[RMDB]
RNA sequence: GGGAACGACUCGAGUAGAGUCGAAAAGAUAUGGAAGCCUAUUGGGAGCUUAUUAUUCGGAAACGAAUAUAGUAAGCGAGGAUCAAUGAGGCUUCCUAAGUCAAAAGUGUAUAGUUCGCUAUACACACAUUAUGGAGGACUUCGGUCCUCCAUAAUGAAAAGAAACAACAACAACAAC
Reactivity to DMS in 0.01 (KOAc 150mM, MgCl2 10mM, bicine 150mM(pH8.5), 24C), signal-to-noise 2, nucleotides 027 to 126: g010a030u000a290u000g000g020a010a000g010c020c000u000a050u010u000g020g010g000a040g020c000u000u000a020u000u000a000u000u000c000g010g000a070a050a150c000g010a010a020u000a050u020a100g020u010a020a010g000c000g010a090g050g000a060u010c010a010a020u000g010a050g000g010c000u000u000c000c000u000a000a070g000u000c010a100a100a140a140g030u010g010u000a000u000a010g000u000u010c300g030c000u000a010u000a000c000a010c000a180
Reactivity to 2A3 in 0.01 (KOAc 150mM, MgCl2 10mM, bicine 150mM(pH8.5), 24C), signal-to-noise 1, nucleotides 027 to 126: g000a020u060a020u090g000g030a010a020g000c000c020u010a050u000u020g050g030g000a070g000c000u010u030a010u060u030a010u000u080c020g010g000a010a000a000c020g000a000a010u080a010u040a070g280u080a010a010g010c000g040a160g030g010a050u020c010a000a000u170g130a160g070g020c000u010u000c000c000u000a000a000g000u000c050a050a050a210a220g020u020g000u030a000u000a010g030u020u080c300g000c120u020a010u020a010c000a000c000a010
This 177-nucleotide RNA was probed chemically with DMS and 2A3. Reactivities are given for positions 27 through 126. For DMS the reverse transcriptase was MarathonRT. The DMS profile rests on 3,183 reads. The 2A3 profile rests on 2,545 reads. The RNA was probed in 150 mM KOAc, 10 mM MgCl2 and 150 mM bicine (pH 8.5) at 24 C.